[RMDB]
RNA sequence: GGGAACGACUCGAGUAGAGUCGAAAACUAGAUGCGCGGAUCUCGGAUCGUACGGAUCUGUACGUACUAGGUACUGAUCGAUCGAUCGUACUAUAGACGAUCCUAUCGUGAUGAGGAUCAUGGCCGCACGGGGAACUACUUUCGAGUAGUUCCCCGUAAAAGAAACAACAACAACAAC
Reactivity to DMS in 0.01 (KOAc 150mM, MgCl2 10mM, bicine 150mM(pH8.5), 24C), signal-to-noise 2, nucleotides 027 to 126: c030u010a060g010a140u000g020c100g050c050g020g000a030u000c010u010c010g000g000a180u000c010g040u010a180c290g010g000a030u010c060u020g010u030a180c160g020u000a080c030u010a050g020g000u000a000c010u040g030a000u000c000g000a130u020c220g000a010u010c000g000u000a010c020u000a030u010a030g000a060c070g010a040u010c000c000u000a180u010c010g010u010g010a300u010g020a030g010g010a060u000c000a060u000g020g050c060c020g030c050
Reactivity to 2A3 in 0.01 (KOAc 150mM, MgCl2 10mM, bicine 150mM(pH8.5), 24C), signal-to-noise 2, nucleotides 027 to 126: c000u040a080g050a230u090g000c000g020c040g080g000a020u000c020u020c020g000g040a020u020c000g030u020a010c090g000g000a000u040c040u090g110u100a070c040g020u000a050c020u000a000g000g000u020a010c050u260g000a010u010c040g090a120u150c150g000a010u000c000g010u010a020c000u030a050u020a110g000a010c020g020a020u000c000c020u020a040u060c020g050u030g000a020u090g000a000g140g030a020u040c010a100u100g150g000c100c010g000c000
This 177-nucleotide RNA was probed chemically with DMS and 2A3. For 2A3, 1,532 sequencing reads were counted. It was measured as part of the RMDB library OK2TRN.